This 207-nucleotide RNA was probed chemically with DMS and 2A3. Conditions: 150 mM KOAc, 10 mM MgCl2 and 150 mM bicine (pH 8.5), 24 C. For DMS the reverse transcriptase was MarathonRT.
RNA sequence: GGGAACGACUCGAGUAGAGUCGAAAAACUACAGUCCUGCCCAUCUUACGGAGGGUCCAAUUGUUAAAUGGAAACUAGUUCUUCAAGGCAAACUGGCUUCACCUUUGAUGGGGAGUGGUGAGGGGUCAGUUCUGAGGACUGACAGCCUCCAGUGCCCCUCCCCAUCACCAUUCGUGGUGAUGGGGAGAAAAGAAACAACAACAACAAC
Reactivity to DMS in 0.01 (KOAc 150mM, MgCl2 10mM, bicine 150mM(pH8.5), 24C), signal-to-noise 1, nucleotides 027 to 156: a090c030u000a100c050a090g010u010c040c010u000g080c020c000c000a040u000c080u000u000a080c140g020g010a190g040g030g030u000c040c020a040a110u000u000g030u000u000a070a100a190u000g010g030a040a030a050c050u000a080g020u000u000c030u000u000c080a060a300g030g020c040a000a060a030c070u000g010g040c020u010u000c000a060c000c000u000u000u000g000a110u000g020g000g010g010a050g000u000g020g000u010g000a060g000g020g040g020u010c020a030g000u000u000c020u000g010a180g000g000a070c010u010g040a040c000a130g010c020c020u000c000c060a110g000u000g000c020c010c010
Reactivity to 2A3 in 0.01 (KOAc 150mM, MgCl2 10mM, bicine 150mM(pH8.5), 24C), signal-to-noise 3, nucleotides 027 to 156: a000c070u150a020c060a050g080u030c000c000u040g090c000c000c010a060u010c020u050u060a030c090g030g020a020g000g020g030u000c000c020a110a180u040u080g020u130u160a090a210a170u120g050g020a010a090a040c080u010a160g230u080u080c020u040u060c070a130a080g020g000c030a050a030a060c110u020g000g000c000u130u110c090a220c040c000u040u070u100g030a020u050g000g000g000g030a020g030u110g000g030u210g010a000g000g000g010g000u000c000a000g010u030u020c060u130g200a150g060g040a010c000u010g000a000c000a060g300c000c010u000c020c010a020g030u050g080c000c000c000